RNA sequence: GGGAACGACUCGAGUAGAGUCGAAAAGACACAAGUGAGAAUUGGAUGUUAUGACCGUCCAGAAAAGACAAGAUGAGAAAGUGCAGUAUUGACUGUCUUCAAACGCACCUGUCCUUGCUCAAGUGCUGGUUGUAUCAUUCUUCGGAAUGAUACAACCAAAAGAAACAACAACAACAAC
Reactivity to 2A3 in 0.01 (KOAc 150mM, MgCl2 10mM, bicine 150mM(pH8.5), 24C), signal-to-noise 2, nucleotides 027 to 126: g030a000c000a000c000a150a000g070u020g090a050g020a070a070u090u020g000g000a030u010g050u040u130a180u240g070a050c020c020g000u000c000c000a020g050a020a110a000a020g030a040c010a020a010g060a180u100g000a000g060a010a120a020g010u120g000c060a030g000u080a220u120u160g210a080c010u040g020u060c020u030u040c010a020a030a040c040g000c000a000c030c000u010g040u010c000c020u000u050g020c000u020c070a020a020g020u040g000c050u050
Reactivity to DMS in 0.01 (KOAc 150mM, MgCl2 10mM, bicine 150mM(pH8.5), 24C), signal-to-noise 1, nucleotides 027 to 126: g000a110c030a020c020a050a120g020u000g000a000g010a170a080u000u010g000g000a070u000g020u000u000a120u010g070a060c190c010g020u000c000c000a070g000a070a080a100a160g020a030c070a030a070g030a070u000g000a130g000a040a060a040g030u000g020c000a030g000u000a190u000u020g020a050c100u020g000u000c080u000u000c060a070a080a120c130g020c040a020c020c090u000g000u010c010c020u020u000g020c010u010c020a070a080g030u000g000c010u020